[RMDB]
RNA sequence: GGGAACGACUCGAGUAGAGUCGAAAAAGAAUUGUACCACCACUGCGUAUCCUAAACGGGCUCUGCAGUGGUUAUUCUUGUAAAGUACUAGGAGUGAAUAGUGGCCCGUAUUGCACGCAUUAACAUUAAAAGGCAAUCCACUUCGGUGGAUUGCCAACCGUAGAGGUAAGUUCGCUUACCUCUACGGAAAAGAAACAACAACAACAAC
Reactivity to DMS in 0.01 (KOAc 150mM, MgCl2 10mM, bicine 150mM(pH8.5), 24C), signal-to-noise 2, nucleotides 027 to 156: a030g010a060a030u000u000g020u000a120c110c170a090c020c000a020c000u000g010c030g000u000a090u000c040c040u000a050a130a200c110g000g010g040c010u000c100u000g040c030a060g000u000g010g030u010u000a020u000u000c040u020u000g010u000a110a080a100g010u000a070c050u020a050g020g010a090g040u010g010a090a100u000a060g040u010g010g010c000c000c020g000u000a060u000u000g010c030a070c080g000c060a110u000u000a010a080c070a110u000u000a030a060a130a140g000g050c020a000a010u000c010c010a040c010u000u000c260g060g050u000g010g000a000u010u000g030c020c000a010a010
Reactivity to 2A3 in 0.01 (KOAc 150mM, MgCl2 10mM, bicine 150mM(pH8.5), 24C), signal-to-noise 2, nucleotides 027 to 156: a000g080a010a020u130u110g050u100a110c000c020a010c000c000a000c020u000g000c020g010u070a040u120c020c050u140a140a140a090c060g030g000g010c030u020c060u120g040c000a000g000u000g000g000u000u000a000u010u000c000u020u050g060u070a060a030a200g040u000a040c080u050a040g060g010a060g040u100g110a110a160u080a070g070u110g030g020c040c010c010g000u020a080u020u170g040c040a020c060g080c020a030u100u150a150a040c030a090u060u100a110a070a040a000g000g000c000a000a000u000c000c000a010c010u050u030c170g060g000u030g000g000a000u010u010g000c000c000a000a000